[RMDB]
RNA sequence: GGGAACGACUCGAGUAGAGUCGAAAACUUUUUUUUUUUUUUGAGAUGCAGUCUCGCUCUGUCACCCAGGCUGGAGUGCAGUGGCAUGAUCUUGGCUCAUUGCAGCCUCCAUCUCGCAGGUUGAAGCAAUUCUCUGCCUCAGCCUCCCGAGUAGCUGCGUUAGUCAGAGAUUCGUCUCUGACUAACGAAAAGAAACAACAACAACAAC
Reactivity to 2A3 in 0.01 (KOAc 150mM, MgCl2 10mM, bicine 150mM(pH8.5), 24C), signal-to-noise 1, nucleotides 027 to 156: c050u110u080u000u050u030u020u070u040u040u000u000u030u200u100g040a080g010a030u100g060c110a020g040u120c060u030c040g020c000u010c000u050g100u070c030a040c070c000c040a110g060g060c110u230g050g050a060g130u130g010c010a020g000u030g030g030c030a010u100g070a120u060c030u040u090g080g010c050u010c100a110u000u140g000c050a020g070c000c030u050c010c010a050u060c000u020c030g040c010a000g000g000u000u020g000a020a000g000c000a010a050u300u100c090u030c040u080g000c020c000u000c000a010g000c000c000u000c030c030c000g000a000g020u040a040g000c060u070g000